An RNA of 177 nucleotides, treated with DMS and 2A3 and read out base by base. Conditions: 150 mM KOAc, 10 mM MgCl2 and 150 mM bicine (pH 8.5), 24 C. Source: RMDB libraries RFM100 and RFMREP, as collected in RNAgym. 2A3 adducts were read by reverse transcription with SuperScript II with manganese.
[RMDB]
RNA sequence: GGGAACGACUCGAGUAGAGUCGAAAAUCUCUGAUUUGCUUGGUGCUGGUCGGGAACCAUUACAUCCACAGUUUCCGUAGAAACUUUCCCUUAGUAAAUUGGACCCCGUCUUGCAUCAAUCGAAUCAGUGAGAGAAGAAAUUCGUUUCUUCUCUCACAAAAGAAACAACAACAACAAC
Reactivity to DMS in 0.01 (KOAc 150mM, MgCl2 10mM, bicine 150mM(pH8.5), 24C), signal-to-noise 6, nucleotides 027 to 126: u010c000u000c000u000g000a010u000u000u000g010c220u000u010g000g010u000g000c000u010g010g000u000c000g010g000g000a090a190c010c010a030u010u000a050c030a120u020c080c100a080c240a040g000u000u000u000c010c300g040u020a080g010a020a010a000c010u000u000u000c050c030c020u010u030a120g000u000a010a030a120u010u010g010g000a180c180c020c000c010g010u000c010u000u010g000c000a010u000c000a010a000u000c010g010a020a010u000c000a030
Reactivity to 2A3 in 0.01 (KOAc 150mM, MgCl2 10mM, bicine 150mM(pH8.5), 24C), signal-to-noise 9, nucleotides 027 to 126: u010c010u000c000u010g000a000u000u000u000g010c010u000u000g000g000u000g000c010u020g010g000u010c000g000g000g010a030a040c000c000a000u010u020a020c020a060u070c100c060a090c030a100g010u010u020u010c030c080g080u100a160g040a020a020a010c010u060u070u100c030c030c000u020u030a060g020u050a040a130a180u110u060g040g020a110c010c000c000c000g000u000c000u000u010g000c000a000u000c000a000a000u000c000g000a000a000u000c000a000